RNA sequence: GGGAACGACUCGAGUAGAGUCGAAAAUAAAGGGAAAUGUCUUGGGCUGUUUUUUUCCUAACCUCUUUUUGGUUCUCUGAGCAUAUUUGUAUUCUGGGAAGCUGAACCCUGUUUAGGGACUUGCACUUUUAAGUCAUUCUAUCUAGACUGCUCAGCACUCGUAUUUAUGGUUCGCCAUAAAUACGAGAAAAGAAACAACAACAACAAC
Reactivity to 2A3 in 0.01 (KOAc 150mM, MgCl2 10mM, bicine 150mM(pH8.5), 24C), signal-to-noise 1, nucleotides 027 to 156: u160a020a050a020g040g000g020a000a160a150u050g000u100c090u070u130g120g000g000c030u000g080u060u090u030u000u000u000u280c070c030u060a120a120c010c040u090c090u150u220u160u100u080g060g000u100u040c080u010c010u000g010a020g000c050a020u000a150u100u090u110g050u050a100u070u060c140u120g020g000g000a000a070g010c030u050g000a030a010c000c000c030u020g050u090u030u070a070g010g000g010a050c030u030u050g000c050a070c080u060u030u100u230a020a000g010u020c000a010u090u070c020u020a030u130c000u030a040g040a050c010u010g010c010u010c040a000g050c030a010

Chemical mapping of a 207-nucleotide RNA with 2A3. It was measured as part of the RMDB library OK3TST. Values cover nucleotides 27 to 156. The RNA was probed in 150 mM KOAc, 10 mM MgCl2 and 150 mM bicine (pH 8.5) at 24 C. The 2A3 profile rests on 447 reads.